Conditions: 150 mM KOAc, 10 mM MgCl2 and 150 mM bicine (pH 8.5), 24 C. Chemical mapping of a 177-nucleotide RNA with 2A3 and DMS. Reactivities are given for positions 27 through 126. The DMS profile rests on 1,155 reads. Source: RMDB library OK2TST, as collected in RNAgym.
RNA sequence: GGGAACGACUCGAGUAGAGUCGAAAAACUAUACAGUAACCGACACAAAGGAUUUGACCAAACUAGGAGCCACUUAUGACAGUGCGAAGAAAUAUUGGGUCUAUCAAGGAAAGCCUGUUAUGCCUGACCUACAACUAUCGUUCGCGAUAGUUGUAGGAAAAGAAACAACAACAACAAC
Reactivity to 2A3 in 0.01 (KOAc 150mM, MgCl2 10mM, bicine 150mM(pH8.5), 24C), signal-to-noise 3, nucleotides 027 to 126: a000c060u070a060u080a240c000a020g040u030a000a090c030c040g030a000c070a010c040a190a060a060g090g000a080u120u010u120g020a040c000c020a010a100a020c040u030a030g010g010a030g050c070c020a060c050u100u110a110u280g140a110c090a040g030u000g050c050g030a040a030g100a070a230a010u200a070u100u110g030g010g000u000c000u020a050u050c060a070a010g070g010a090a080a010g060c010c020u020g020u070u060a030u120g020c000c030u030g080a080
Reactivity to DMS in 0.01 (KOAc 150mM, MgCl2 10mM, bicine 150mM(pH8.5), 24C), signal-to-noise 2, nucleotides 027 to 126: a200c060u000a090u000a100c070a110g020u000a150a110c030c040g000a110c120a070c110a060a120a130g000g020a040u000u010u010g000a070c020c050a060a050a020c120u000a070g000g000a110g050c030c010a000c060u010u010a080u000g010a070c190a060g010u010g000c040g030a090a010g010a060a120a010u000a100u000u020g010g000g000u000c060u000a040u000c040a060a060g000g000a140a090a130g020c060c020u000g000u000u000a040u000g020c030c000u010g000a190